The record gives the reactivity of an RNA of 177 nucleotides to DMS.
Values cover nucleotides 27 to 126.
RNA sequence: GGGAACGACUCGAGUAGAGUCGAAAAUCUAGUCUAUUCGUAGACUAGAAAAGACUGCUGCCGGCAGGGUUGACUGCGGCGAGCAGAAACGGCAAAGGAAAAAAACUCUUGCUUUCGAGCAAGAGAAUAAAACAGGUGGAUUCGUCCACCUGUUUUAAAAAGAAACAACAACAACAAC
Reactivity to DMS in 0.01 (KOAc 150mM, MgCl2 10mM, bicine 150mM(pH8.5), 24C), signal-to-noise 1, nucleotides 027 to 126: u000c000u000a020g010u000c000u000a020u000u020c120g000u010a000g000a020c000u000a000g000a000a060a090a120g020a160c010u000g000c000u010g000c000c000g050g060c000a000g000g000g020u020u020g020a160c030u000g010c010g000g000c000g020a040g000c010a050g010a020a060a080c150g010g000c160a070a050a100g000g010a000a000a070a130a060a060a120c000u030c000u000u010g020c000u000u000u010c150g010a000g030c000a000a010g010a000g000a020a050